[RMDB]
RNA sequence: GGGAACGACUCGAGUAGAGUCGAAAACAGGUGGAGGCUACAAGAUUCUGACCCUCCCUAAGCACUGAUCCUAAGAUCGGUGCUUGAGAUAUUUUGCAGACCCUGCACUUGAUGGAUCACCUGGCAAGUCCCACAGUAUAUUCGUAUACUGUGGGACAAAAGAAACAACAACAACAAC
Reactivity to 2A3 in 0.01 (KOAc 150mM, MgCl2 10mM, bicine 150mM(pH8.5), 24C), signal-to-noise 3, nucleotides 027 to 126: c010a000g040g010u030g000g180a010g040g000c010u050a010c020a030a050g020a110u080u100c060u150g300a300c010c000c000u020c000c000c010u010a010a000g000c010a010c010u010g010a000u030c010c090u170a210a050g000a000u000c020g010g000u000g000c000u000u000g000a010g000a000u110a030u050u050u030u030g000c000a020g020a200c030c010c040u030g020c010a010c000u040u070g020a100u070g140g000a030u070c030a040c090c000u020g080g000c030a060a030
Reactivity to DMS in 0.01 (KOAc 150mM, MgCl2 10mM, bicine 150mM(pH8.5), 24C), signal-to-noise 5, nucleotides 027 to 126: c040a020g020g030u010g000g000a030g000g020c020u000a020c040a030a040g010a030u000u000c030u000g000a300c060c020c010u000c000c000c000u000a020a010g000c000a010c000u000g000a010u000c010c300u000a150a160g000a000u000c010g010g010u000g000c000u000u000g000a030g000a050u000a020u000u000u000u000g000c040a020g000a130c160c010c000u000g000c020a030c030u010u000g000a110u000g010g000a140u000c110a130c020c000u000g010g010c160a110a140